Source: RMDB library OK2TRN, as collected in RNAgym. The record gives the reactivity of an RNA of 177 nucleotides to 2A3 and DMS. For 2A3, 1,029 sequencing reads were counted. Reactivities are given for positions 27 through 126. For 2A3 the reverse transcriptase was SuperScript II with manganese. The RNA was probed in 150 mM KOAc, 10 mM MgCl2 and 150 mM bicine (pH 8.5) at 24 C.

[RMDB]
RNA sequence: GGGAACGACUCGAGUAGAGUCGAAAACAGUGACAAAAUCAACAAUCACUCAGGCAAAUGGAUGCAAAAAUACUUUGCAGAAAAAUGGGGCCUAUACCUAACACUGGUGCUUGCUAUGGACAGUGAAUCAACAUCUAUGCUUCGGCAUAGAUGUUGAAAAAGAAACAACAACAACAAC
Reactivity to 2A3 in 0.01 (KOAc 150mM, MgCl2 10mM, bicine 150mM(pH8.5), 24C), signal-to-noise 1, nucleotides 027 to 126: c010a010g010u020g030a000c120a030a190a030a200u140c030a030a070c020a040a060u050c000a020c060u100c030a000g110g050c020a000a000a090u050g070g010a020u000g010c000a000a000a000a070a000u150a070c070u030u030u000g000c020a020g120a010a080a020a020a050u120g000g020g060g000c010c000u010a050u060a030c010c010u060a120a000c010a010c050u070g000g070u040g080c000u100u090g020c020u080a020u220g020g020a010c000a040g030u030g070a020a030
Reactivity to DMS in 0.01 (KOAc 150mM, MgCl2 10mM, bicine 150mM(pH8.5), 24C), signal-to-noise 1, nucleotides 027 to 126: c110a040g000u010g000a010c110a070a090a080a170u000c160a060a110c090a120a100u000c020a050c040u000c030a050g020g020c020a050a120a050u000g020g040a230u010g000c000a000a110a040a150a070u050a160c160u000u000u000g000c000a030g000a120a080a080a040a060u000g010g000g020g020c000c030u000a040u020a050c010c020u030a040a140c070a030c080u000g060g020u000g010c010u000u000g030c100u020a080u020g020g000a080c050a020g000u000g010a080a130